Source information: The data come from the RNA Mapping Database (RMDB), library OK1LIB. Structure probing data (DMS and 2A3) for a 177-nucleotide construct. The RNA was probed in 150 mM KOAc, 10 mM MgCl2 and 150 mM bicine (pH 8.5) at 24 C.
[RMDB]
RNA sequence: GGGAACGACUCGAGUAGAGUCGAAAACAUGCCCCGUCCCAUGUGGGUAGUCUCGUCCCUGUGCCCACAGCGGAGCCCGGGCAAUUCCGUCGAGCACCGCCCCACUGGUCCCUGCAGGAAAGCGCGCAUGCCCAUCAUCAUUCGUGAUGAUGGGCAUAAAAGAAACAACAACAACAAC
Reactivity to DMS in 0.01 (KOAc 150mM, MgCl2 10mM, bicine 150mM(pH8.5), 24C), signal-to-noise 2, nucleotides 027 to 126: c230a080u040g000c010c000c020c090g000u000c000c000c010a200u010g030u010g010g010g000u000a020g010u020c110u020c040g000u000c020c050c000u000g020u000g000c000c000c000a040c030a070g020c290g030g000a040g000c100c030c200g000g000g040c060a070a070u020u000c000c020g010u000c080g020a070g000c030a060c040c040g010c100c040c000c020a100c050u010g020g000u010c020c010c030u010g000c060a050g030g000a070a020a100g000c020g020c020g000c050
Reactivity to 2A3 in 0.01 (KOAc 150mM, MgCl2 10mM, bicine 150mM(pH8.5), 24C), signal-to-noise 4, nucleotides 027 to 126: c070a040u070g040c000c000c000c040g070u070c000c000c020a040u030g010u060g000g030g010u020a050g120u060c070u050c190g070u030c010c000c000u030g030u040g030c010c010c010a010c000a020g030c150g040g000a030g020c030c040c020g030g010g000c030a000a020u140u060c010c030g040u050c040g030a020g020c020a010c060c000g010c020c000c000c000a040c050u030g000g030u030c020c000c010u000g010c010a010g030g080a110a080a040g060c040g000c000g010c030